This 177-nucleotide RNA was probed chemically with DMS. DMS adducts were read by reverse transcription with MarathonRT. The RNA was probed in 150 mM KOAc, 10 mM MgCl2 and 150 mM bicine (pH 8.5) at 24 C.

RNA sequence: GGGAACGACUCGAGUAGAGUCGAAAACUGGUCAGACACGGCUGGAGGCCAAGGUCAAGUUGAAAGUUGCAGUCCAGCCAGCAUGAGAACUGCCAUGCGAGCGUAGAGACACAGGCAGCAGCAAAAGACGUUCUUCACCUUUCGAGGUGAAGAACGUAAAAGAAACAACAACAACAAC
Reactivity to DMS in 0.01 (KOAc 150mM, MgCl2 10mM, bicine 150mM(pH8.5), 24C), signal-to-noise 1, nucleotides 027 to 126: c060u000g030g000u000c020a070g010a070c220a060c140g020g000c030u010g000g000a050g040g050c020c070a110a080g030g010u000c170a050a070g010u000u000g000a060a160a150g000u000u010g010c020a090g000u000c000c000a050g020c000c030a150g000c010a070u000g000a110g000a080a070c070u000g040c020c010a020u000g000c050g000a070g000c050g030u000a080g010a200g000a060c010a050c050a080g000g010c010a030g010c070a000g070c210a120a070a030a110g010